Source: RMDB library VIROID, as collected in RNAgym.
This 207-nucleotide RNA was probed chemically with 2A3.
The reactions ran in a buffer of 150 mM KOAc, 10 mM MgCl2 and 150 mM bicine (pH 8.5), at 24 C.

RNA sequence: GGGAACGACUCGAGUAGAGUCGAAAAGGAGCAUUGUUGAGCGGUCCAUGGGGAAACCUCCCUUCGUCCUUCGGCAUUGUGGUGCGUCGUGGGAAAGCGUGCCGCAUGGGGAAGCCGUGUACGAGGACGUACACCUUGUUUUGGUGGGGGAGAGUGUGAGACUCGAAAAGUUCGCUUUUCGAGUCUCAAAAGAAACAACAACAACAAC
Reactivity to 2A3 in 0.01 (KOAc 150mM, MgCl2 10mM, bicine 150mM(pH8.5), 24C), signal-to-noise 2, nucleotides 027 to 156: g010g020a020g000c050a040u050u100g060u070u090g050a030g020c030g000g040u030c060c040a090u110g020g020g000g040a050a060a040c000c000u000c000c010c010u040u050c030g000u010c000c000u110u160c000g000g010c020a090u010u050g010u000g010g010u010g000c000g010u030c010g010u080g000g030g020a000a000a000g000c000g000u000g020c000c000g010c020a050u050g010g020g010g040a050a020g000c000c040g020u080g030u050a080c140g030a020g010g010a010c000g060u080a010c000a000c000c000u150u120g100u280u220u180u220g030g000u000g000g000g000g000g000a010g010a030g010u030g020u030